[RMDB]
An RNA of 177 nucleotides, treated with DMS and 2A3 and read out base by base. For 2A3, 2,546 sequencing reads were counted. Conditions: 150 mM KOAc, 10 mM MgCl2 and 150 mM bicine (pH 8.5), 24 C. High DMS reactivity at an A or C suggests that its Watson-Crick edge is free.

RNA sequence: GGGAACGACUCGAGUAGAGUCGAAAAGGUACAACGUUCGCGUUGUACCAAAUAAGGCAACCUUCGUGGUGACGAGAAUAAAUGAGUGCUCGCCCUCAAAAAAAACAAUCCCCUUCGGGGGAUUGAAGUUCCUCUUAUUGUUCGCAAUAAGAGGAACAAAAGAAACAACAACAACAAC
Reactivity to DMS in 0.01 (KOAc 150mM, MgCl2 10mM, bicine 150mM(pH8.5), 24C), signal-to-noise 2, nucleotides 027 to 126: g000g010u010a010c000a000a010c000g010u000u020c170g030c000g000u000u000g020u000a000c020c010a020a030a030u010a060a100g000g010c140a090a060c040c010u010u000c160g010u000g030g000u000g010a020c030g000a040g020a070a070u010a050a110a120u010g020a080g020u000g000c010u000c020g010c010c010c010u020c010a010a000a010a060a030a120a040a170c000a000a000u000c000c000c010c010u000u000c210g030g000g020g010g000a000u000u000g000a010a090
Reactivity to 2A3 in 0.01 (KOAc 150mM, MgCl2 10mM, bicine 150mM(pH8.5), 24C), signal-to-noise 2, nucleotides 027 to 126: g030g000u000a010c010a000a000c000g010u020u070c150g010c010g130u010u000g020u020a000c000c000a010a020a000u080a010a000g060g050c020a050a020c020c000u110u130c120g070u060g010g040u050g050a100c010g010a020g030a060a070u160a140a170a130u210g060a050g120u050g050c010u010c030g020c010c000c000u010c020a110a060a000a000a010a010a010a040c000a000a000u010c000c010c020c010u000u030c070g100g000g000g000g000a010u010u010g000a020a000